[RMDB]
RNA sequence: GGGAACGACUCGAGUAGAGUCGAAAACUUCGUGAGCAGGCCAAGAAAAUGAACGUCGCUUCACUCAGAGCGAACGCUGACCAACAAAAGCAGAGUGCUGAAUGUCGUCUUGCUAAGGUUGCUAUGACUGUAAAAGAACAUUCGUGUUCUUUUACAGAAAAGAAACAACAACAACAAC
Reactivity to DMS in 0.01 (KOAc 150mM, MgCl2 10mM, bicine 150mM(pH8.5), 24C), signal-to-noise 9, nucleotides 027 to 126: c060u000u010c080g020u000g010a080g020c040a040g010g000c030c050a070a100g000a060a050a080a090u010g010a080a090c070g000u000c030g010c020u000u000c060a110c110u010c120a130g000a040g010c020g000a050a050c060g030c040u000g010a090c090c080a060a090c120a060a060a090a070g010c030a060g010a090g010u000g010c030u000g010a080a080u010g010u010c090g010u000c030u000u000g010c050u010a080a110g010g010u000u000g000c020u000a090u010g000a260
Reactivity to 2A3 in 0.01 (KOAc 150mM, MgCl2 10mM, bicine 150mM(pH8.5), 24C), signal-to-noise 8, nucleotides 027 to 126: c010u080u060c040g070u060g040a030g020c030a030g010g080c020c030a060a020g100a060a150a030a030u130g030a090a010c020g040u020c020g010c010u080u060c040a060c070u090c040a030g010a010g050c010g020a070a020c040g000c050u060g030a060c020c030a050a080c040a040a130a020a000g010c030a010g050a030g150u100g010c020u060g050a170a100u100g030u070c020g010u010c020u030u050g010c020u050a090a060g080g000u040u030g020c020u050a060u170g040a060

This 177-nucleotide RNA was probed chemically with DMS and 2A3. 2A3 adducts were read by reverse transcription with SuperScript II with manganese. The RNA was probed in 150 mM KOAc, 10 mM MgCl2 and 150 mM bicine (pH 8.5) at 24 C. DMS adducts were read by reverse transcription with MarathonRT. The data come from the RNA Mapping Database (RMDB), library OK2TRN.